[RMDB]
RNA sequence: GGGAACGACUCGAGUAGAGUCGAAAAGGGUUUGAGCCAUCGCCCGAAUAAGAUGGUUGAUACAAGUCGUCAUUGUACGCGACGUAGUACGUACUCAUUAGUGCGAAAGCACGGUUAGUCCGACUAGGCAGGGACGAUCUUCUGUCAAUACUUAGAACCUAUACCUCCUGUUCGCAGGAGGUAUAGGAAAAGAAACAACAACAACAAC
Reactivity to DMS in 0.01 (KOAc 150mM, MgCl2 10mM, bicine 150mM(pH8.5), 24C), signal-to-noise 2, nucleotides 027 to 156: g020g000g030u020u010u000g040a080g000c020c060a080u000c050g040c020c020c000g030a100a140u010a060a150g010a050u010g040g020u000u060g030a150u010a050c050a080a130g010u010c010g010u020c020a130u000u000g030u000a110c050g010c000g020a090c020g000u010a100g000u000a070c020g020u000a030c010u000c090a110u010u010a050g050u000g000c000g020a100a130a300g020c010a030c000g010g000u000u000a080g000u000c020c030g020a140c030u000a120g020g000c020a130g010g040g020a040c040g020a060u000c060u000u010c060u000g020u030c020a030a070u010a060c050u010u000a090g000a150a190
Reactivity to 2A3 in 0.01 (KOAc 150mM, MgCl2 10mM, bicine 150mM(pH8.5), 24C), signal-to-noise 4, nucleotides 027 to 156: g090g000g010u110u100u170g090a010g000c000c000a010u030c010g040c010c010c020g020a060a110u190a110a010g000a010u010g010g030u030u040g040a080u080a110c080a080a050g010u000c000g020u030c040a120u040u190g050u140a080c070g030c040g080a030c070g020u010a010g010u000a120c000g000u000a000c000u020c030a030u030u030a100g000u000g000c010g050a070a010a000g000c000a000c000g000g010u010u030a020g010u020c030c030g000a030c030u040a050g010g010c010a000g030g010g020a040c040g030a070u060c040u170u060c050u010g040u010c040a050a100u040a110c040u070u140a050g050a090a080

Conditions: 150 mM KOAc, 10 mM MgCl2 and 150 mM bicine (pH 8.5), 24 C. Chemical mapping of a 207-nucleotide RNA with DMS and 2A3. For 2A3 the reverse transcriptase was SuperScript II with manganese.